RNA sequence: GGGAACGACUCGAGUAGAGUCGAAAACAACACAAUUUCAUUUGUGCCAAUCAUUCUAACAAAGUAUACCUCGGUCUCAGUGAUGGCAUACUUUGCUGGAUUGAUUGGUACACAUGAAAUUGUGAUGCGGCAAUAUACUCUUCGGAGUAUAUUGCCGAAAAGAAACAACAACAACAAC
Reactivity to 2A3 in 0.01 (KOAc 150mM, MgCl2 10mM, bicine 150mM(pH8.5), 24C), signal-to-noise 1, nucleotides 027 to 126: c020a000a020c000a000c000a010a000u010u010u010c000a000u000u000u000g010u000g050c020c000a000a000u010c000a000u010u000c000u040a000a020c000a000a010a030g000u000a010u010a020c000c020u060c050g200g060u100c210u050c270a150g050u070g230a090u190g010g000c000a000u000a010c000u010u010u020g000c000u010g020g020a010u000u020g010a010u000u000g010g010u000a010c000a000c000a000u010g020a000a000a000u010u000g000u000g000a020u070g050
Chemical mapping of a 177-nucleotide RNA with 2A3. It was measured as part of the RMDB library RFMREP. For 2A3 the reverse transcriptase was SuperScript II with manganese.